Structure probing data (DMS) for a 177-nucleotide construct. The RNA was probed in 150 mM KOAc, 10 mM MgCl2 and 150 mM bicine (pH 8.5) at 24 C. For DMS the reverse transcriptase was MarathonRT. It was measured as part of the RMDB library TTRINS.
RNA sequence: GGGAACGACUCGAGUAGAGUCGAAAAGAUAUGGAUCUACGCCAUCAGAGACAGAGAGACAUGAGCGAUGUCGGAAACGACAUCAGCUCAACAGCUCUUCUGUCUCUGAUGGCGUAGAUCCUAAGUCGAAAUAGUAGUAGUUCGCUACUACUAUUUCAAAAGAAACAACAACAACAAC
Reactivity to DMS in 0.01 (KOAc 150mM, MgCl2 10mM, bicine 150mM(pH8.5), 24C), signal-to-noise 3, nucleotides 027 to 126: g010a100u000a300u010g010g000a010u000c000u010a010c010g000c000c000a010u010c000a010g010a010g020a010c000a000g020a020g000a020g010a070c130a300u000g010a010g030c010g010a000u000g020u000c000g020g010a130a120a210c010g020a020c010a010u000c010a040g030c000u010c010a030a040c300a150g000c010u000c000u000u020c000u010g020u000c000u010c000u000g000a000u000g000g000c000g010u000a010g000a000u000c000c000u000a010a090g000u000c120